[RMDB]
RNA sequence: GGGAACGACUCGAGUAGAGUCGAAAAUUAAUGAAGCAAAUCUCCAAACGCCAACGAUGAGCGUUUCGCAAUCGCCGCUUAAGGCUUUUGCCGAGGCUGCUUGAGACUUGUUACCAAAGAAAAGCCGAAAACCCAAAUGUCUUCGGACAUUUGGGAACAGUGAGUAUUACUUCGGUAAUACUCACUGAAAAGAAACAACAACAACAAC
Reactivity to DMS in 0.01 (KOAc 150mM, MgCl2 10mM, bicine 150mM(pH8.5), 24C), signal-to-noise 1, nucleotides 027 to 156: u000u020a130a090u000g000a170a080g000c000a090a030a040u000c020u000c040c030a090a060a030c040g000c030c010a070a080c040g000a070u000g000a100g070c010g000u000u010u000c120g070c050a190a010u000c040g000c010c000g000c160u000u000a080a160g020g000c010u000u000u000u000g000c020c000g030a150g000g050c000u000g050c030u000u000g020a150g000a030c050u000u000g000u000u000a300c040c030a040a140a270g000a130a080a040a070g020c060c000g000a050a030a080a170c000c030c010a010a010a020u000g020u000c000u010u010c300g000g030a000c000a000u020u000u000g000g000g000a000a040
Reactivity to 2A3 in 0.01 (KOAc 150mM, MgCl2 10mM, bicine 150mM(pH8.5), 24C), signal-to-noise 3, nucleotides 027 to 156: u110u060a060a060u140g060a020a000g000c010a000a010a060u020c020u020c020c030a030a030a000c040g000c030c020a110a120c140g200a240u170g030a040g030c010g010u020u010u040c090g000c020a050a040u110c040g010c040c010g070c090u150u130a170a060g000g000c000u060u100u050u090g040c000c010g030a040g020g010c050u030g010c000u080u080g010a010g000a010c010u000u030g020u070u060a060c040c020a060a070a020g080a010a090a020a000g090c090c080g100a080a070a060a080c000c000c000a000a000a000u010g000u000c000u020u050c170g080g000a000c000a000u000u000u000g000g000g000a000a000